An RNA of 177 nucleotides, treated with 2A3 and DMS and read out base by base. Source: RMDB library OK1LIB, as collected in RNAgym. For DMS the reverse transcriptase was MarathonRT.

[RMDB]
RNA sequence: GGGAACGACUCGAGUAGAGUCGAAAACGUGUCGUGAGAUGUUGGGUUAAGUCCCGCAACGAGCGCAACCCUUGUUCUGUGUUGCCAGCAUGCCCUUCGGGGUGAUGGGGACUCACAGGAGACCGCCAAUUUAAUUUAAAUUCGUUUAAAUUAAAUUAAAAGAAACAACAACAACAAC
Reactivity to 2A3 in 0.01 (KOAc 150mM, MgCl2 10mM, bicine 150mM(pH8.5), 24C), signal-to-noise 9, nucleotides 027 to 126: c040g030u110g130u100c020g010u060g050a160g040a180u120g050u290u300g040g010g010u100u130a130a100g300u140c000c000c010g000c000a010a010c000g010a010g000c000g000c040a040a140c010c000c000u010u290g010u010u000c000u000g010u000g070u130u240g050c010c010a010g010c000a010u010g000c000c000c000u020u070c230g050g000g000g000u020g000a010u010g010g010g010g020a040c010u000c010a000c000a000g050g010a010g010a040c220c150g050c090c030
Reactivity to DMS in 0.01 (KOAc 150mM, MgCl2 10mM, bicine 150mM(pH8.5), 24C), signal-to-noise 6, nucleotides 027 to 126: c190g010u010g010u030c010g020u010g010a250g010a060u020g010u010u050g040g010g010u000u010a110a140g000u010c000c000c000g000c020a050a040c010g010a280g000c000g000c050a080a160c010c010c010u000u030g000u000u000c010u000g000u010g010u020u010g000c000c010a050g000c010a020u000g000c000c000c000u000u050c160g010g000g000g010u000g010a020u000g000g000g000g000a060c010u000c020a020c020a010g000g010a020g000a080c020c070g010c160c090